An RNA of 177 nucleotides, treated with 2A3 and DMS and read out base by base. It was measured as part of the RMDB library TTRDES. DMS adducts were read by reverse transcription with MarathonRT. Reactivities are rounded to 0.1 and cut off at 0 and 3. For DMS, 1,740 sequencing reads were counted.
[RMDB]
RNA sequence: GGGAACGACUCGAGUAGAGUCGAAAAGAUAUGGAGUGUGAAUAGCGAGGAUCGUGUGGAUCGGAAACGAUCCCACGGGAGCUACACACUCCUAAGUCAAAGUCAUUACCCUUCGGGGUAAUGACAAGAAAUGUGGCUAGUUCGCUAGCCACAUUUCAAAAGAAACAACAACAACAAC
Reactivity to 2A3 in 0.01 (KOAc 150mM, MgCl2 10mM, bicine 150mM(pH8.5), 24C), signal-to-noise 1, nucleotides 027 to 126: g000a000u020a000u040g030g000a000g010u070g000u030g120a300a300u080a180g010c010g070a300g120g000a030u020c020g000u020g040u170g010g020a000u000c000g000g000a020a000a000c000g000a000u000c000c000c020a010c000g000g000g000a010g000c010u000a020c010a010c000a000c010u000c000c000u000a000a000g000u000c010a060a070a000g010u000c000a010u010u000a000c000c000c000u020u100c300g110g000g000g000u000a000a010u000g000a000c010a000a030
Reactivity to DMS in 0.01 (KOAc 150mM, MgCl2 10mM, bicine 150mM(pH8.5), 24C), signal-to-noise 1, nucleotides 027 to 126: g000a030u000a020u040g000g000a020g000u000g000u000g000a240a210u000a020g020c030g010a080g030g010a020u000c020g020u000g000u020g000g020a000u000c000g000g010a000a010a000c000g020a010u000c010c010c000a000c000g010g000g000a000g020c000u000a090c000a020c000a000c010u010c010c000u000a010a050g000u010c000a120a170a210g010u000c000a000u010u000a000c000c000c000u000u000c210g020g010g010g000u000a000a000u010g010a000c000a080a050